Structure probing data (DMS and 2A3) for a 177-nucleotide construct. Reactivities are given for positions 27 through 126.

[RMDB]
RNA sequence: GGGAACGACUCGAGUAGAGUCGAAAAGAUAUGGACCUAAAGCCGAUAAGCUCCCAUCGGAAACGAUGGUGAGCUUUUGACGGCUACUUAGGUCCUAAGUCAAAAUCGCUGCCUUCGGGCAGCGAAACCUCUUAUACCUGUUCGCAGGUAUAAGAGGAAAAGAAACAACAACAACAAC
Reactivity to DMS in 0.01 (KOAc 150mM, MgCl2 10mM, bicine 150mM(pH8.5), 24C), signal-to-noise 3, nucleotides 027 to 126: g010a040u000a300u020g000g000a030c000c000u010a000a040a050g020c000c000g040a160u010a040a010g000c000u000c010c010c000a010u000c000g010g010a120a040a090c000g020a010u000g000g020u010g010a000g000c000u000u000u000u000g030a200c070g000g000c010u000a000c300u000u010a010g020g000u000c010c000u010a000a070g000u010c010a100a090a200a150u000c010g020c010u010g010c000c000u000u020c270g010g030g020c010a010g000c020g000a010a050a050
Reactivity to 2A3 in 0.01 (KOAc 150mM, MgCl2 10mM, bicine 150mM(pH8.5), 24C), signal-to-noise 2, nucleotides 027 to 126: g020a010u030a020u130g000g020a010c000c000u030a090a030a000g000c020c030g180a280u090a300a010g010c010u000c010c010c000a000u030c000g000g040a070a010a040c020g000a000u000g030g000u120g000a010g000c050u010u000u000u020g020a010c000g000g000c000u000a000c020u010u000a000g000g030u020c000c000u000a000a000g020u000c010a010a020a060a300u030c000g000c010u010g000c000c040u050u080c290g200g010g030c000a000g000c000g010a000a000a010
The 2A3 profile rests on 4,027 reads.
The DMS profile rests on 2,964 reads.
DMS adducts were read by reverse transcription with MarathonRT.
It was measured as part of the RMDB library TTRDES.
2A3 adducts were read by reverse transcription with SuperScript II with manganese.
Conditions: 150 mM KOAc, 10 mM MgCl2 and 150 mM bicine (pH 8.5), 24 C.